[RMDB]
RNA sequence: GGGAACGACUCGAGUAGAGUCGAAAAGCUGCUCCUUAGUGUGUGCAAAAGUCUGCCACCUGACAGACAUGUAGACAUGUACACAUGUAGACAUGGGCGAUCUGGCAUCCAGGUGUGACACUGGUGAGCCAUCACCCCGUUUCGACGGGGUGAUGGCAAAAGAAACAACAACAACAAC
Reactivity to DMS in 0.01 (KOAc 150mM, MgCl2 10mM, bicine 150mM(pH8.5), 24C), signal-to-noise 1, nucleotides 027 to 126: g040c080u010g000c050u010c020c030u000u000a120g010u030g000u020g080u000g040c030a030a020a180a110g000u020c090u020g000c040c030a080c140c070u000g050a120c090a150g000a040c000a030u000g010u000a030g000a020c060a110u000g010u000a110c190a050c120a010u010g020u000a000g030a030c050a040u000g000g010g000c010g000a100u000c050u000g000g000c040a100u010c040c010a010g000g000u000g000u000g020a090c070a040c010u000g000g070u000g010a140

Structure probing data (DMS) for a 177-nucleotide construct. The RNA was probed in 150 mM KOAc, 10 mM MgCl2 and 150 mM bicine (pH 8.5) at 24 C. In probing experiments dimethyl sulfate is read out at A N1 and C N3, which are open when not base-paired.